About this RNA: Structure probing data (2A3 and DMS) for a 207-nucleotide construct. The DMS profile rests on 3,636 reads.
[RMDB]
RNA sequence: GGGAACGACUCGAGUAGAGUCGAAAACUUCGCUGUGCGUGCUCAUGGGCUGACUGCUGAUGAGAAGCCCCUCCCAAAGCGAGAGGUGAAAGAGAAGGACACGAGUGUGAAACCAAAGAGUGUAGAGGCUAAGAGAGUACCUCCAAAGCCUCGUCCAUACAUACGUCAAGUUCGCUUGACGUAUGUAAAAAGAAACAACAACAACAAC
Reactivity to 2A3 in 0.01 (KOAc 150mM, MgCl2 10mM, bicine 150mM(pH8.5), 24C), signal-to-noise 3, nucleotides 027 to 156: c040u060u040c040g060c120u110g020u070g020c010g070u060g000c010u020c080a100u100g000g050g040c040u040g080a110c040u120g070c030u070g100a120u110g040a040g000a070a010g010c020c010c000c010u030c020c010c000a120a140a000g060c070g040a060g010a020g080g010u040g050a090a070a010g110a000g020a080a050g030g000a020c020a000c090g020a020g000u000g020u020g010a040a030a000c020c000a030a030a030g040a020g020u100g010u090a050g000a000g000g000c000u030a110a000g050a000g000a030g060u060a160c030c010u000c020c010a140a140a030g000c000c000u000c000g000u000c010c000a020
Reactivity to DMS in 0.01 (KOAc 150mM, MgCl2 10mM, bicine 150mM(pH8.5), 24C), signal-to-noise 2, nucleotides 027 to 156: c060u010u010c050g020c040u030g000u020g020c000g020u010g020c030u000c030a090u010g000g010g010c030u000g030a190c090u000g000c030u000g020a130u000g000a170g010a140a200g000c000c000c010c000u050c000c020c000a080a160a150g040c020g030a080g000a030g020g040u010g000a020a040a110g000a120g030a160a090g040g020a110c040a170c010g000a050g020u000g020u000g000a040a010a110c000c020a030a040a040g010a170g030u000g030u010a120g000a070g030g050c030u000a130a050g030a100g010a260g030u010a110c050c000u010c010c000a010a080a120g000c000c010u000c010g000u000c040c030a180
2A3 is a SHAPE reagent: it acylates the 2'-hydroxyl of flexible nucleotides of all four kinds. High DMS reactivity at an A or C suggests that its Watson-Crick edge is free. Source: RMDB library OK3TST, as collected in RNAgym. DMS adducts were read by reverse transcription with MarathonRT. The RNA was probed in 150 mM KOAc, 10 mM MgCl2 and 150 mM bicine (pH 8.5) at 24 C. For 2A3 the reverse transcriptase was SuperScript II with manganese.